The record gives the reactivity of an RNA of 177 nucleotides to DMS and 2A3. For DMS, 4,895 sequencing reads were counted. Conditions: 150 mM KOAc, 10 mM MgCl2 and 150 mM bicine (pH 8.5), 24 C. Source: RMDB library OK1LIB, as collected in RNAgym.
RNA sequence: GGGAACGACUCGAGUAGAGUCGAAAACAAGACGGUGUACGGGGAAAAUACCCAUCGCACCUUCUCUGUGGUCGUCGACGAUUGCAGCAUGCGGGCGGUGCUCCGGCGACUGCAGGUCGGCGGGGGCGUUGCUAGUAUCGUUCGCGAUACUAGCAACAAAAGAAACAACAACAACAAC
Reactivity to DMS in 0.01 (KOAc 150mM, MgCl2 10mM, bicine 150mM(pH8.5), 24C), signal-to-noise 3, nucleotides 027 to 126: c050a070a020g020a060c050g000g000u000g010u000a120c300g000g000g020g020a130a090a110a170u090a170c020c000c010a060u020c200g000c020a030c010c000u000u030c050u000c100u040g000u020g000g030u010c000g010u010c040g020a090c050g050a110u050u020g000c020a040g010c110a060u000g010c060g020g000g010c000g000g000u050g000c010u020c020c000g000g000c050g000a090c020u010g000c000a000g010g000u000c040g000g010c010g000g000g010g000g010c260
Reactivity to 2A3 in 0.01 (KOAc 150mM, MgCl2 10mM, bicine 150mM(pH8.5), 24C), signal-to-noise 6, nucleotides 027 to 126: c040a010a030g030a020c050g000g000u020g020u070a060c090g000g000g040g140a070a150a060a070u300a150c000c010c000a050u130c070g000c000a010c000c000u030u000c020u000c000u000g050u040g050g070u030c020g010u020c010g010a060c030g140a260u040u160g010c020a010g010c010a050u300g070c040g050g020g000c070g150g190u160g030c050u050c030c010g130g000c000g140a210c010u020g000c000a020g000g030u030c020g020g020c040g000g010g010g020g010c050